[RMDB]
RNA sequence: GGGAACGACUCGAGUAGAGUCGAAAAUGACAUUCGCGCGCGUAUUCGCUGAACAGCGCUGCAGCGGCCGACGACACCUCAUCGGCGGCCGCGGCCAGCAGUCCGGUCGUUGGACCCGCAGCGGACGACAAGCCAACUUGUUCGCAAGUUGGCUUGUAAAAGAAACAACAACAACAAC
Reactivity to DMS in 0.01 (KOAc 150mM, MgCl2 10mM, bicine 150mM(pH8.5), 24C), signal-to-noise 2, nucleotides 027 to 126: u080g020a050c020a190u010u000c050g010c030g000c060g020c090g010u000a110u010u010c060g020c000u000g010a080a100c100a300g010c070g000c030u010g000c060a100g000c000g000g000c000c010g020a000c000g000a010c080a070c120c100u020c140a220u000c000g000g000c000g020g020c000c020g020c010g000g020c080c070a030g020c030a070g000u020c070c030g000g050u000c040g000u000u000g000g020a190c030c050c110g000c010a010g010c040g000g020a050c070g000
Reactivity to 2A3 in 0.01 (KOAc 150mM, MgCl2 10mM, bicine 150mM(pH8.5), 24C), signal-to-noise 1, nucleotides 027 to 126: u150g020a000c040a040u040u060c040g000c000g000c000g000c000g050u030a140u120u120c070g000c020u030g000a130a090c070a070g060c030g000c060u040g000c000a010g000c010g000g000c000c000g000a010c010g000a010c000a130c040c030u160c020a020u040c000g020g010c000g000g000c000c000g010c000g000g000c050c010a000g000c010a000g050u030c060c010g040g010u030c020g040u050u130g040g080a040c000c050c000g020c000a000g010c030g000g030a010c020g000

Structure probing data (DMS and 2A3) for a 177-nucleotide construct. Values are in units of 0.01, from 0 to 300, in steps of 10. For DMS the reverse transcriptase was MarathonRT. The reactions ran in a buffer of 150 mM KOAc, 10 mM MgCl2 and 150 mM bicine (pH 8.5), at 24 C. The 2A3 profile rests on 1,046 reads.